Chemical mapping of a 207-nucleotide RNA with DMS and 2A3. For 2A3, 1,774 sequencing reads were counted.
[RMDB]
RNA sequence: GGGAACGACUCGAGUAGAGUCGAAAAUUCAGAACGUCGUGAGACAGUUCGGUCCAUAUCCGGUGUGGGCGUUAGAGCAUUGAGAGGACCUUUCCCUAGUACGAGAGGACCGGGAAGGACGCACCUCUGGUGUACCAGUUAUCGUGCCCACGGUAAAUCCAUUGGUAUUGUUCGCAAUACCAAUGGAAAAAGAAACAACAACAACAAC
Reactivity to DMS in 0.01 (KOAc 150mM, MgCl2 10mM, bicine 150mM(pH8.5), 24C), signal-to-noise 3, nucleotides 027 to 156: u000u000c060a050g010a010a030c000g010u000c000g000u020g010a300g010a040c000a070g030u010u010c010g030g030u000c030c050a180u000a120u000c040c020g050g030u010g020u000g000g020g010c030g010u000u000a060g010a300g010c010a020u000u020g010a060g020a080g000g000a300c020c010u000u000u010c000c010c010u000a100g020u000a090c030g000a240g000a230g020g000a100c090c110g000g040g000a090a020g020g000a050c110g020c110a060c010c000u000c030u000g010g030u000g010u000a100c070c050a130g020u000u000a060u000c030g000u000g010c010c000c000a070c020g000g000u010a040a190a190
Reactivity to 2A3 in 0.01 (KOAc 150mM, MgCl2 10mM, bicine 150mM(pH8.5), 24C), signal-to-noise 3, nucleotides 027 to 156: u120u090c050a020g010a020a010c020g010u010c010g090u100g090a120g000a020c060a060g000u020u000c000g010g000u000c040c010a070u080a100u160c110c070g150g020u140g030u060g070g000g000c020g040u050u110a070g010a010g010c020a010u030u110g290a020g000a030g050g080a300c000c000u070u070u030c020c000c000u000a010g010u000a000c010g000a000g000a030g110g020a000c030c030g000g000g000a000a000g030g020a030c060g010c090a230c000c000u000c000u000g000g000u030g000u000a110c050c040a080g040u150u090a060u090c060g050u090g070c000c010c000a000c000g000g000u060a040a010a040
Reactivities are rounded to 0.1 and cut off at 0 and 3. It was measured as part of the RMDB library PDB130. DMS adducts were read by reverse transcription with MarathonRT. The reactions ran in a buffer of 150 mM KOAc, 10 mM MgCl2 and 150 mM bicine (pH 8.5), at 24 C.